RNA sequence: GGGAACGACUCGAGUAGAGUCGAAAACACGGAGUAUUAUAGAGCGCAAUAUAAUACGAGCUGGAACGGCAGCGAGAUAAUAUGAGCGCAAAUAUUAUCGACGUCGACCGUGACGGACGUGGAAAAAGGGAUUUACAUAGUUCGCUAUGUAAAUCCCAAAAGAAACAACAACAACAAC
Reactivity to DMS in 0.01 (KOAc 150mM, MgCl2 10mM, bicine 150mM(pH8.5), 24C), signal-to-noise 3, nucleotides 027 to 126: c000a010c020g000g010a280g030u000a000u000u000a000u000a040g010a120g000c090g030c100a040a130u000a010u010a000a000u000a000c000g010a030g000c000u000g010g000a150a040c000g000g000c090a110g050c000g030a300g000a010u010a020a000u000a010u000g000a080g000c220g000c110a070a130a010u000a000u000u010a000u000c010g000a120c040g000u030c110g000a100c000c010g010u010g010a250c000g000g000a110c030g040u010g010g000a000a110a040a170a060
Reactivity to 2A3 in 0.01 (KOAc 150mM, MgCl2 10mM, bicine 150mM(pH8.5), 24C), signal-to-noise 5, nucleotides 027 to 126: c030a000c000g040g030a070g010u010a010u000u020a000u010a020g070a060g080c140g020c200a100a020u010a000u000a030a030u020a010c020g010a020g020c010u010g000g010a010a000c010g010g010c010a010g000c010g010a010g000a030u010a000a020u030a020u040g110a090g130c150g000c190a020a110a000u010a000u000u000a010u010c080g140a250c020g110u080c050g040a280c000c000g000u010g010a010c020g000g000a000c000g010u020g040g060a030a040a010a060a050
Source: RMDB library OK1LIB, as collected in RNAgym. An RNA of 177 nucleotides, treated with DMS and 2A3 and read out base by base. The DMS profile rests on 3,497 reads. Conditions: 150 mM KOAc, 10 mM MgCl2 and 150 mM bicine (pH 8.5), 24 C.